[RMDB]
RNA sequence: GGGAACGACUCGAGUAGAGUCGAAAAUAACGAUCGGUUUAAUGUCAUAUUUCCUGUGCGUGAGGGCGGUAUUCGGGGCCGAUUGGGGUACGCGCAAUUUAUGAUAGAUGGCAAUGAUGGCUUGGCAGCCUAAUGGAUCAUUCGUGAUCCAUUAGGCAAAAGAAACAACAACAACAAC
Reactivity to 2A3 in 0.01 (KOAc 150mM, MgCl2 10mM, bicine 150mM(pH8.5), 24C), signal-to-noise 3, nucleotides 027 to 126: u080a030a020c050g030a060u060c050g040g120u040u040u160a130a060u140g040u080c050a010u020a070u090u030u060c010c050u020g030u020g020c020g000u030g050a080g030g030g020c060g010g040u050a090u050u150c090g020g020g000g000c040c040g020a040u030u110g020g000g000g020u060a030c000g020c000g030c030a020a050u050u110u040a090u140g070a030u030a100g070a020u070g000g000c000a010a020u090g030a010u040g010g000c050u010u050g030g000c010a020
Reactivity to DMS in 0.01 (KOAc 150mM, MgCl2 10mM, bicine 150mM(pH8.5), 24C), signal-to-noise 2, nucleotides 027 to 126: u010a080a150c090g000a040u000c060g010g000u010u000u010a070a130u000g020u000c040a030u000a060u000u000u000c070c070u000g020u000g020c030g020u000g000a160g010g010g000c050g000g010u010a060u000u000c120g010g000g000g000c050c060g010a080u000u000g010g020g000g010u010a030c080g010c050g000c050a030a040u010u000u000a010u020g010a070u000a040g000a160u000g000g000c040a040a070u000g000a040u000g000g020c060u000u000g010g010c120a140
Source: RMDB library OK2TST, as collected in RNAgym. An RNA of 177 nucleotides, treated with 2A3 and DMS and read out base by base. DMS adducts were read by reverse transcription with MarathonRT. 2A3 adducts were read by reverse transcription with SuperScript II with manganese.